[RMDB]
RNA sequence: GGGAACGACUCGAGUAGAGUCGAAAAGAAGAGCGAUUGAUUUCAAGCUCAAGGUCGUUCAUCACCGGAGUAGGCCUGAUGUUCGACCGAUUAGUCUUGACGGGUCUAUGCUGACGUCUUGACGAGAGGGUAGGUGCACGUUCGCGUGUACCUACCCAAAAGAAACAACAACAACAAC
Reactivity to DMS in 0.01 (KOAc 150mM, MgCl2 10mM, bicine 150mM(pH8.5), 24C), signal-to-noise 3, nucleotides 027 to 126: g020a150a210g000a010g020c010g000a090u010u010g000a160u020u020u010c070a080a140g010c010u000c020a160a090g000g020u000c010g030u000u000c030a010u020c000a060c030c040g030g030a220g030u020a100g010g010c260c170u000g000a010u010g000u000u000c000g010a000c000c000g000a010u010u030a110g020u000c000u020u010g010a030c040g010g010g010u000c120u010a100u070g000c070u000g000a110c000g020u010c000u020u000g020a020c020g000a080g010a200
Reactivity to 2A3 in 0.01 (KOAc 150mM, MgCl2 10mM, bicine 150mM(pH8.5), 24C), signal-to-noise 5, nucleotides 027 to 126: g120a100a030g010a000g010c060g060a100u070u170g140a120u050u160u120c040a070a010g010c010u010c020a000a020g000g000u000c000g000u000u010c000a000u010c000a000c050c000g100g070a210g120u250a080g140g030c020c080u020g000a010u000g000u000u010c000g000a000c000c000g000a000u030u090a010g000u000c010u020u010g000a000c000g050g080g000u030c080u150a150u300g080c080u110g060a020c000g000u010c000u000u010g010a020c010g010a020g030a020
This 177-nucleotide RNA was probed chemically with DMS and 2A3. For DMS the reverse transcriptase was MarathonRT. For DMS, 5,012 sequencing reads were counted.